[RMDB]
RNA sequence: GGGAACGACUCGAGUAGAGUCGAAAAAGACUGAAAAUCUUGCCUCAGCAAGAAAUACAGUGGUGCCAGGUGUAACUCCCCUAAACUGAUAAUAUUAGUAUAAGGUUGGCAGCCUAGCCAGCAAUUAUAUAACGUAGUGUUUCGACACUACGUUAUAAAAAGAAACAACAACAACAAC
Reactivity to DMS in 0.01 (KOAc 150mM, MgCl2 10mM, bicine 150mM(pH8.5), 24C), signal-to-noise 7, nucleotides 027 to 126: a090g010a070c030u010g010a070a070a150a120u010c000u000u000g000c010c230u010c250a140g020c020a020a020g010a030a050a110u010a230c040a030g010u000g010g020u000g010c020c020a050g000g020u000g000u010a110a120c090u000c050c010c020c050u000a030a070a060c030u000g010a050u010a050a080u000a300u000u000a030g010u010a090u000a060a080g010g020u000u000g000g010c030a150g010c090c080u010a140g010c020c020a050g010c050a040a050u010u020a090
Reactivity to 2A3 in 0.01 (KOAc 150mM, MgCl2 10mM, bicine 150mM(pH8.5), 24C), signal-to-noise 2, nucleotides 027 to 126: a000g040a000c010u040g040a000a030a030a100u010c010u000u020g000c040c070u180c030a030g010c010a020a020g030a020a030a010u130a030c000a000g000u020g020g030u060g050c000c040a060g060g000u040g000u070a060a050c040u030c030c000c000c020u040a050a100a060c010u000g050a010u060a240a060u110a110u100u080a010g020u050a070u010a170a030g070g020u000u020g000g000c010a000g030c000c010u010a010g040c000c010a020g000c010a000a020u140u030a070